[RMDB]
RNA sequence: GGGAACGACUCGAGUAGAGUCGAAAAUUCAACUCAGAGCGCAGCAUGUACAAAGGCCCUAGGACAGGAGGAAGUGUGGUGGGUUGGAGGAAGAAAAGGGGGUUCCCUGUGGCUGGGGCCCAGAGGGACUGUAUUUCUUAUUCGUAAGAAAUACAGUAAAAGAAACAACAACAACAAC
Reactivity to 2A3 in 0.01 (KOAc 150mM, MgCl2 10mM, bicine 150mM(pH8.5), 24C), signal-to-noise 3, nucleotides 027 to 126: u010u010c020a000a030c020u000c060a030g020a010g090c040g000c030a040g010c020a040u100g040u110a050c040a070a090a040g030g000c010c000c010u020a020g000g010a010c010a030g040g050a040g050g040a090a110g080u110g020u080g140g240u150g040g040g040u090u130g060g040a090g050g030a070a090g080a070a160a030a040g080g000g010g000g000u030u040c000c010c000u020g010u010g050g020c010u000g010g000g000g000c010c000c000a010g030a020g000g010g010
Reactivity to DMS in 0.01 (KOAc 150mM, MgCl2 10mM, bicine 150mM(pH8.5), 24C), signal-to-noise 5, nucleotides 027 to 126: u010u010c070a060a100c060u010c050a100g000a100g030c050g020c030a060g000c060a070u010g010u000a100c100a080a120a150g010g010c010c010c000u010a060g010g010a080c070a040g000g000a110g000g000a100a110g010u010g010u000g010g010u000g000g000g000u010u010g000g010a110g000g010a100a090g000a030a040a050a120g000g000g000g000g000u000u010c030c000c010u000g020u000g010g020c020u000g020g000g010g020c120c010c030a020g000a070g000g000g000